[RMDB]
RNA sequence: GGGAACGACUCGAGUAGAGUCGAAAACGUUAGCCGAAUUCUUAUUGCCGCCCGAUUUUCGCCCAGCGCGCGCCAAGCCCGCUUGCGAUAACGCUAUCACUGCGUUGGCCCGGUCCCUUCGGCUUCGGUUAUGGGAACCGUUCGCGGUUCCCAUAACAAAAGAAACAACAACAACAAC
Reactivity to DMS in 0.01 (KOAc 150mM, MgCl2 10mM, bicine 150mM(pH8.5), 24C), signal-to-noise 2, nucleotides 027 to 126: c090g000u010u000a020g000c050c040g000a140a070u000u030c050u010u000a090u000u000g070c050c060g010c050c010c020g000a080u000u000u000u000c070g000c000c040c090a130g020c070g080c180g020c050g040c080c140a100a120g000c000c030c020g000c120u000u010g000c070g010a130u030a000a040c030g060c100u000a080u010c150a070c120u000g020c050g000u040u080g000g000c050c030c010g000g010u000c000c050c010u000u060c000g000g000c020u000u000c130g050
Reactivity to 2A3 in 0.01 (KOAc 150mM, MgCl2 10mM, bicine 150mM(pH8.5), 24C), signal-to-noise 2, nucleotides 027 to 126: c030g050u080u070a030g010c010c010g020a070a090u100u060c040u120u190a190u130u150g070c030c060g060c010c000c000g050a020u060u030u020u080c040g010c000c010c020a030g010c000g000c010g000c000g010c040c040a080a020g010c020c020c000g040c020u040u080g010c000g070a070u060a040a030c020g040c000u030a060u280c090a060c120u110g030c020g000u000u110g020g000c030c000c000g030g010u050c000c000c030u000u010c020g020g000c000u080u090c070g020